[RMDB]
RNA sequence: GGGAACGACUCGAGUAGAGUCGAAAAGGCAUUCGCUUCGGCGAAUGCCAAAGAGUGCACGGCAGCACAAGUCGUGCCGACGUCAAGAAAAGCCGUAAUAAAAAAGCCUGAACUUCGGUUCAGGCAAGAACAAACACAAGUUCGCUUGUGUUUGUUCAAAAGAAACAACAACAACAAC
Reactivity to 2A3 in 0.01 (KOAc 150mM, MgCl2 10mM, bicine 150mM(pH8.5), 24C), signal-to-noise 1, nucleotides 027 to 126: g000g030c020a000u000u020c010g020c050u040u070c150g010g000c000g000a000a000u000g000c000c010a010a000a000g000a000g040u160g000c000a000c030g010g010c010a040g110c070a130c030a200a080g000u000c000g010u010g030c010c000g020a020c000g020u060c060a090a060g070a110a190a020a000g030c000c000g060u050a000a130u150a230a300a010a000a030a000g010c000c000u000g010a010a010c010u020u070c210g050g000u030u000c000a000g000g020c000a000a000
Reactivity to DMS in 0.01 (KOAc 150mM, MgCl2 10mM, bicine 150mM(pH8.5), 24C), signal-to-noise 2, nucleotides 027 to 126: g000g000c010a010u000u000c000g060c000u010u010c180g010g050c010g000a010a000u000g020c010c000a010a070a040g000a090g030u000g010c020a010c030g000g000c010a100g030c210a150c240a080a080g010u000c020g010u000g010c000c030g010a070c040g010u000c080a070a110g000a090a040a090a110g050c020c030g000u000a100a120u050a000a020a150a120a090a130g010c000c010u000g000a000a000c010u000u000c200g030g010u000u000c010a000g000g000c000a000a000